[RMDB]
RNA sequence: GGGAACGACUCGAGUAGAGUCGAAAAGAAAGGGACCCCUGCCAAGGGAGCGUCGGUCAGCACCCCAGGCAUAUUUUUUUAUGCCGCUGACACCCCUCGACGCAGCAGGAGGGGUGGUCCCGAAAGAAUCAGGUAAUCCAUUCGUGGAUUACCUGAUAAAAGAAACAACAACAACAAC
Reactivity to 2A3 in 0.01 (KOAc 150mM, MgCl2 10mM, bicine 150mM(pH8.5), 24C), signal-to-noise 1, nucleotides 027 to 126: g020a040a050a010g000g000g000a000c000c030c020c050u060g050c050c060a150a080g120g050g020a070g020c000g030u040c040g000g010u010c000a000g000c000a080c030c040c010c020a010g000g010c010a020u030a030u050u170u020u030u000u010u000a000u010g010c000c040g050c020u010g010a000c000a050c060c060c000c050u050c010g040a040c030g020c040a030g080c010a040g000g080a010g000g000g000g030u010g020g050u010c040c010c010g010a010a030a020g000a010
Reactivity to DMS in 0.01 (KOAc 150mM, MgCl2 10mM, bicine 150mM(pH8.5), 24C), signal-to-noise 1, nucleotides 027 to 126: g010a100a090a130g020g000g000a050c000c000c000c010u000g020c040c060a140a150g020g010g020a170g020c000g020u000c020g010g000u000c000a010g000c050a110c100c040c020c060a190g010g000c000a010u000a000u000u000u030u020u020u000u000a010u000g000c000c010g000c020u000g000a010c010a180c070c070c030c050u010c000g000a030c040g020c020a140g000c090a100g000g000a060g000g000g010g010u000g010g000u000c000c000c000g010a090a080a110g000a130
This 177-nucleotide RNA was probed chemically with 2A3 and DMS.
The RNA was probed in 150 mM KOAc, 10 mM MgCl2 and 150 mM bicine (pH 8.5) at 24 C.
It was measured as part of the RMDB library OK2TRN.
The 2A3 profile rests on 1,649 reads.